[RMDB]
RNA sequence: GGGAACGACUCGAGUAGAGUCGAAAAAUGGCAGACUCUGGACAUGCUCCUAGAGAUGGGAGGUCAAAAUGAUCAACGUUCAGGGUCCCUUCAUCUCAGAGGGUCUCGAGUCACCUCAUUUAAAGUGUGGCCUGGGACACCUCCUAUCCAGCCAUAAUGAUCCCACUGGAUUCGUCCAGUGGGAUCAAAAAGAAACAACAACAACAAC
Reactivity to 2A3 in 0.01 (KOAc 150mM, MgCl2 10mM, bicine 150mM(pH8.5), 24C), signal-to-noise 1, nucleotides 027 to 156: a000u000g010g000c020a030g010a000c010u000c000u000g000g000a000c000a010u220g020c010u000c000c000u040a030g060a030g030a180u050g010g000g000a010g000g060u070c140a050a050a000a240u170g020a070u120c130a090a050c090g030u000u000c000a020g000g000g000u000c020c020c020u050u030c010a090u070c010u020c030a010g000a000g000g000g010u000c000u010c010g000a000g000u000c000a010c010c000u070c060a070u060u170u270a290a280a070g070u130g000u020g060g000c000c020u020g000g000g000a010c000a300c000c000u000c020c000u070a080u030c000c050a000g120c060c060a050u140a040a090